[RMDB]
RNA sequence: GGGAACGACUCGAGUAGAGUCGAAAAGAUAUGGAACACAAGAGGCGAGGAUCUGGUCACUCGGAAACGAGUGCCAGGGAGCCUUGAUGUGUUCCUAAGUCAAAACUUCGGACUUCGGUCCGAAGAACAUAACUUCCGUGUUCGCACGGAAGUUAUGAAAAGAAACAACAACAACAAC
Reactivity to DMS in 0.01 (KOAc 150mM, MgCl2 10mM, bicine 150mM(pH8.5), 24C), signal-to-noise 4, nucleotides 027 to 126: g020a050u000a300u020g000g010a010a000c000a020c010a070a300g010a020g010g020c010g010a070g040g000a030u010c000u000g000g020u010c020a000c000u000c000g010g000a050a050a150c000g010a000g020u000g000c000c000a000g010g010g020a010g020c000c010u000u010g000a200u000g000u000g040u000u000c000c000u000a010a070g000u010c040a100a100a130a110c020u000u000c000g020g000a010c000u000u030c290g030g000u000c000c000g000a000a010g010a080a110
Reactivity to 2A3 in 0.01 (KOAc 150mM, MgCl2 10mM, bicine 150mM(pH8.5), 24C), signal-to-noise 2, nucleotides 027 to 126: g010a000u080a040u190g000g000a000a010c000a010c000a010a070g000a000g020g000c040g100a300g050g020a020u010c010u020g030g060u300c050a020c020u000c010g000g030a060a050a030c010g000a000g020u010g000c000c000a010g020g000g000a000g010c000c000u010u020g040a050u170g000u000g000u000u000c000c000u000a030a000g030u000c020a030a000a120a230c000u010u000c000g000g000a010c010u070u140c300g060g000u000c000c000g000a000a010g000a010a010